[RMDB]
RNA sequence: GGGAACGACUCGAGUAGAGUCGAAAAGACUGGCUGGGUGAAAAGUUACAGGCCGCGUGGCAGUGGUUUAAAAACCUGAUUGCCCCGGUUAAAGCCACACAGGACACCCUGAACCGUUGCCGUGACACGGGCGUCAUGUUCGGGCAGGCACUGGCUGCGAGGUAGUACUAUUCGUAGUACUACCUCGAAAAGAAACAACAACAACAAC
Reactivity to DMS in 0.01 (KOAc 150mM, MgCl2 10mM, bicine 150mM(pH8.5), 24C), signal-to-noise 2, nucleotides 027 to 156: g000a090c000u010g010g060c000u010g000g000g040u000g000a060a120a080a110g030u010u000a120c060a230g000g000c030c000g010c120g040u000g040g000c070a080g010u000g000g000u000u000u010a070a120a140a070a030c000c000u010g030a150u000u010g010c000c010c020c130g010g000u000u010a050a070a160g020c010c020a070c020a090c020a060g000g000a130c030a040c040c000c010u000g020a030a080c040c040g040u010u000g030c000c070g000u010g040a150c050a160c090g000g000g020c030g000u000c140a030u010g000u000u010c020g010g000g070c030a110g020g010c030a090c060u020g030g020c000u000g000
Reactivity to 2A3 in 0.01 (KOAc 150mM, MgCl2 10mM, bicine 150mM(pH8.5), 24C), signal-to-noise 3, nucleotides 027 to 156: g020a020c070u060g010g040c000u020g010g110g020u070g030a100a030a030a040g070u120u110a090c040a070g000g060c010c020g000c030g030u240g000g000c000a010g010u030g040g000u040u040u080a050a090a010a020a000c000c010u060g080a110u000u090g000c010c000c000c000g000g030u060u100a060a010a000g000c000c000a030c000a010c010a030g060g020a030c010a030c050c000c050u060g080a100a070c010c030g040u050u110g010c060c020g080u080g000a050c070a020c140g090g060g010c010g010u080c080a080u130g010u060u070c020g000g000g000c030a010g010g000c030a030c070u030g030g030c000u050g010